[RMDB]
RNA sequence: GGGAACGACUCGAGUAGAGUCGAAAAAGGGAUUUUUCAGGCUUCUCUGCGACUUUUUUCAAACGCACCAAGCAUUUCCUUACGUUCUUUGGGAUGAGACGUGUAAGAUGAAGUUUGGGAGUUGACGACUGCAGUCCGGGUUCGCCCGGACUGCAGUAAAAGAAACAACAACAACAAC
Reactivity to 2A3 in 0.01 (KOAc 150mM, MgCl2 10mM, bicine 150mM(pH8.5), 24C), signal-to-noise 1, nucleotides 027 to 126: a050g180g010g040a090u120u090u000u000u060c040a010g000g060c020u170u040c020u010c000u040g030c000g030a110c030u100u030u000u010u010u080c060a060a050a020c020g020c010a010c000c000a010a010g000c090a140u080u080u000c040c000u030u020a020c010g060u150u000c000u000u050u020g180g050g030a070u130g050a060g000a000c000g060u030g010u050a000a030g010a010u070g010a030a080g000u000u020u000g010g020g000a040g010u000u080g050a020c090g000